[RMDB]
RNA sequence: GGGAACGACUCGAGUAGAGUCGAAAAGGUACUAAUAAGUCAAAAGUUGUAACAGUGUCAAUUGAUUACCAUAGCAUAAAUUUUAUGACUUGGUUUGAAGAUGGCAGUAUUAAAACAUGUUAUCCACAGCUUCAAUCAGCAUGGACGUGUGGUUAUAAUCAACCUCUCCAUUCGUGGAGAGGUUGAUAAAAGAAACAACAACAACAAC
Reactivity to 2A3 in 0.01 (KOAc 150mM, MgCl2 10mM, bicine 150mM(pH8.5), 24C), signal-to-noise 1, nucleotides 027 to 156: g000g040u030a010c040u020a030a110u060a090a070g000u020c070a040a040a060a040g040u080u020g050u120a180a100c020a040g080u060g020u100c000a090a100u090u060g020a030u100u090a000c020c030a010u240a010g000c000a020u100a110a280a300u300u300u150u070a020u010g050a090c000u010u000g000g040u040u010u130g150a080a100g030a010u030g040g020c000a020g030u070a000u100u170a020a010a000a010c010a010u090g000u020u090a030u000c000c000a050c070a110g050c030u020u080c030a020a070u080c000a080g050c020a040u050g000g000a020c090g000u080g000u000g000g090u010u000a040u020a160